Structure probing data (DMS and 2A3) for a 177-nucleotide construct. Values cover nucleotides 27 to 126. For 2A3 the reverse transcriptase was SuperScript II with manganese. The DMS profile rests on 2,237 reads. DMS adducts were read by reverse transcription with MarathonRT. The data come from the RNA Mapping Database (RMDB), library OK2TST. As a SHAPE reagent, 2A3 marks flexible, mostly unpaired nucleotides at the ribose 2'-OH. For 2A3, 1,291 sequencing reads were counted.
RNA sequence: GGGAACGACUCGAGUAGAGUCGAAAAGCGAAGUUGGAUAAACUUUUUGCUACAUACGUGAAUGGUGAACUAGACAUGUUUCGGGUCACGGAUUUUGGGACACGACGGCGCUACAGCUUCGAUGUGCCCUAGUAAUGCCCUUCGGGGCAUUACUAGGAAAAGAAACAACAACAACAAC
Reactivity to DMS in 0.01 (KOAc 150mM, MgCl2 10mM, bicine 150mM(pH8.5), 24C), signal-to-noise 2, nucleotides 027 to 126: g030c000g000a050a020g010u000u010g010g030a140u020a090a050a020c010u000u010u000u010u000g030c000u000a120c180a100u010a100c080g010u000g010a060a070u010g010g010u010g010a050a050c070u000a120g030a070c150a070u000g010u000u000u010c070g000g010g000u000c030a040c040g010g010a130u000u040u020u000g020g000g000a000c010a040c030g000a020c130g010g000c040g020c070u000a060c140a070g030c030u000u010c040g000a080u000g000u010g000c090
Reactivity to 2A3 in 0.01 (KOAc 150mM, MgCl2 10mM, bicine 150mM(pH8.5), 24C), signal-to-noise 2, nucleotides 027 to 126: g030c020g000a030a000g060u080u060g200g060a180u090a180a010a010c020u030u000u030u190u170g000c010u060a060c010a090u170a040c020g050u050g080a110a030u080g100g060u110g050a060a030c020u030a070g080a140c060a050u120g100u060u060u060c110g040g020g030u020c020a000c040g030g020a030u160u030u120u230g030g010g040a010c000a000c070g160a000c050g050g000c040g040c060u090a070c010a050g030c000u080u040c020g020a040u070g040u090g010c000